[RMDB]
RNA sequence: GGGAACGACUCGAGUAGAGUCGAAAAGAUGGGGGUGUACUGGUCUCGACAGGGCGGACAAAGGUGCGCAGGCAACUCGUCAGGCGAUCGACGUUAAUGAAGCAAAUCCAUAAUUGCCAAUGAUGAGCUUAAGUAGACACUUCGGUGUCUACUUAAGAAAAGAAACAACAACAACAAC
Reactivity to 2A3 in 0.01 (KOAc 150mM, MgCl2 10mM, bicine 150mM(pH8.5), 24C), signal-to-noise 1, nucleotides 027 to 126: g120a060u140g010g020g040g030g000u040g000u030a030c000u030g050g010u050c040u000c050g050a030c040a030g000g020g060c030g030g000a030c030a000a140a030g020g020u020g060c040g010c040a010g040g030c010a040a040c000u020c020g000u000c010a000g000g060c000g010a040u050c050g040a050c000g010u040u100a030a060u130g040a040a000g000c030a060a040a040u030c020c020a030u070a130a060u120u080g030c020c010a080a060u080g030a010u050g000a040g000
Reactivity to DMS in 0.01 (KOAc 150mM, MgCl2 10mM, bicine 150mM(pH8.5), 24C), signal-to-noise 2, nucleotides 027 to 126: g000a120u010g010g000g000g010g000u010g000u000a050c050u000g010g010u000c040u010c060g030a090c090a140g010g000g020c070g010g000a070c080a030a080a090g030g000u010g020c090g050c060a050g010g010c080a050a090c040u010c060g010u000c010a040g010g010c030g020a030u000c060g000a060c060g020u000u010a060a070u000g010a090a120g000c090a070a080a080u030c050c070a060u010a040a100u010u000g010c030c030a050a080u010g000a020u010g010a070g010
Structure probing data (2A3 and DMS) for a 177-nucleotide construct. For 2A3 the reverse transcriptase was SuperScript II with manganese. It was measured as part of the RMDB library RFMREP.